Structure probing data (DMS and 2A3) for a 177-nucleotide construct.
Reactivities are rounded to 0.1 and cut off at 0 and 3.
[RMDB]
RNA sequence: GGGAACGACUCGAGUAGAGUCGAAAAUAAAGAAAUUCGCGCGGAUCAUUGGGAAUGUGAAGCAGGAGAAUAUCCCCCCUGUGAUGGGCAUACGGCGCAAUGGGUCAUGCGCGAUCGCGUGGCAACCGACGCCUUACAGAUUCGUCUGUAAGGCGUCAAAAGAAACAACAACAACAAC
Reactivity to DMS in 0.01 (KOAc 150mM, MgCl2 10mM, bicine 150mM(pH8.5), 24C), signal-to-noise 2, nucleotides 027 to 126: u000a060a090a110g010a080a050a090u000u000c000g020c070g040c010g040g000a050u000c010a050u010u000g020g030g050a160a060u010g010u000g010a200a300g020c030a010g040g000a040g010a060a120u000a160u000c080c010c010c060c020c000u000g030u000g020a050u020g000g000g010c060a020u000a040c120g020g010c120g010c050a030a100u000g010g010g020u020c040a110u010g020c030g030c060g000a030u010c000g000c060g020u010g000g010c040a010a070c170c130
Reactivity to 2A3 in 0.01 (KOAc 150mM, MgCl2 10mM, bicine 150mM(pH8.5), 24C), signal-to-noise 1, nucleotides 027 to 126: u140a010a080a030g090a020a130a020u110u010c020g000c030g000c030g070g000a030u000c000a030u050u100g090g070g080a080a160u080g020u030g020a030a020g030c020a030g000g000a130g000a100a070u170a210u190c000c000c000c000c000c000u020g010u000g050a050u030g070g140g000c030a010u080a080c120g030g000c060g000c160a010a030u100g070g060g040u070c020a130u140g000c000g020c010g020a050u040c000g000c050g050u080g030g040c030a060a000c000c030
It was measured as part of the RMDB library OK2TST.
The reactions ran in a buffer of 150 mM KOAc, 10 mM MgCl2 and 150 mM bicine (pH 8.5), at 24 C.